RNA sequence: GGGAACGACUCGAGUAGAGUCGAAAAGAUAUGGAGCGAGGGAGCUCGUAUGGGCACAUCGGAAACGAUAGCCCAUACCGAGCGAAGAACUCGCUCCUAAGUCAAAAGGUUUCCUUCGGGAAACCAACGAGAGUAGUUAGUUCGCUAACUACUCUCGAAAAGAAACAACAACAACAAC
Reactivity to DMS in 0.01 (KOAc 150mM, MgCl2 10mM, bicine 150mM(pH8.5), 24C), signal-to-noise 3, nucleotides 027 to 126: g000a030u010a300u020g000g000a010g010c000g000a020g010g000g000a190g030c010u000c010g000u000a000u000g000g010g010c000a090c260a130u000c000g000g000a140a070a210c000g000a000u000a120g000c000c000c000a000u000a000c080c100g030a020g000c000g000a060a120g000a100a180c020u000c010g000c000u000c000c000u000a000a090g030u010c040a090a030a150a120g000g010u000u000u010c000c000u010u010c130g030g000g010a010a000a000c000c000a020a040